The record gives the reactivity of an RNA of 177 nucleotides to 2A3 and DMS. For DMS, 22,566 sequencing reads were counted.
[RMDB]
RNA sequence: GGGAACGACUCGAGUAGAGUCGAAAAUGGUACUGGUGGUUGGCAGUUAGCGGCAUUAAACAUAUGUAGUAAAGCAGCUCGUAAACCUUUGAUUGCCGAUGGUGGUAUAAGAACGCAUGGCGACAUCACGUGUUAGAAAUUUCGAUUUCUAACACGUAAAAGAAACAACAACAACAAC
Reactivity to 2A3 in 0.01 (KOAc 150mM, MgCl2 10mM, bicine 150mM(pH8.5), 24C), signal-to-noise 6, nucleotides 027 to 126: u090g030g020u040a020c040u020g070g000u020g040g020u050u060g030g000c020a030g020u040u070a040g010c020g030g000c020a020u050u120a070a070a010c030a020u120a030u260g060u070a040g040u040a020a140a020g030c020a020g000c010u010c030g070u060a050a040a080c010c000u050u040u090g100a140u090u080g030c010c010g020a040u060g020g060u040g030g010u080a110u040a170a060g040a050a010c030g020c040a040u040g020g010c020g020a030c000a020u120c040
Reactivity to DMS in 0.01 (KOAc 150mM, MgCl2 10mM, bicine 150mM(pH8.5), 24C), signal-to-noise 9, nucleotides 027 to 126: u010g010g010u000a060c060u010g010g030u000g010g010u000u000g010g020c050a060g010u000u000a070g020c050g010g010c040a050u000u010a060a070a110c140a100u010a090u010g010u000a070g020u010a050a100a120g010c050a060g000c030u010c070g010u010a060a070a090c080c060u000u000u000g010a090u010u000g020c020c020g000a100u000g010g010u000g010g010u010a070u010a060a090g010a070a080c100g010c050a050u000g010g010c040g010a060c100a070u000c120

The RNA was probed in 150 mM KOAc, 10 mM MgCl2 and 150 mM bicine (pH 8.5) at 24 C. 2A3 adducts were read by reverse transcription with SuperScript II with manganese.